[RMDB]
RNA sequence: GGGAACGACUCGAGUAGAGUCGAAAAAAUCGGGGAAGAUAAGCUUGCAGCAAAAAGGAACCGAUUCCCACCAAGUUCGGAAAGAGAUACCGGGCGAGGCGCUGAAGAAAGAAUCUCGCUUCAGACAUACAGCCGUGUCGCUUCGGCGACACGGCAACAUAUACCUCGACUUCGGUCGAGGUAUAUGAAAAGAAACAACAACAACAAC
Reactivity to 2A3 in 0.01 (KOAc 150mM, MgCl2 10mM, bicine 150mM(pH8.5), 24C), signal-to-noise 1, nucleotides 027 to 156: a000a000u050c020g000g020g000g000a040a040g030a290u090a170a000g030c020u100u210g120c150a050g020c050a250a150a020a000a000g070g000a020a000c000c000g000a000u010u020c070c000c000a000c030c030a080a040g000u030u030c000g000g150a220a070a050g150a150g020a000u090a100c000c000g000g000g000c030g030a010g010g000c110g000c060u040g000a000a000g020a010a230a050g050a120a150u050c090u050c180g020c000u020u010c000a080g030a160c020a060u180a040c010a050g000c000c000g010u040g000u020c000g000c000u120u140c180g110g000c000g000a000c000a000c030g030g000c000a000a000
This 207-nucleotide RNA was probed chemically with 2A3. The 2A3 profile rests on 425 reads. The data come from the RNA Mapping Database (RMDB), library M2RFPK. The RNA was probed in 150 mM KOAc, 10 mM MgCl2 and 150 mM bicine (pH 8.5) at 24 C.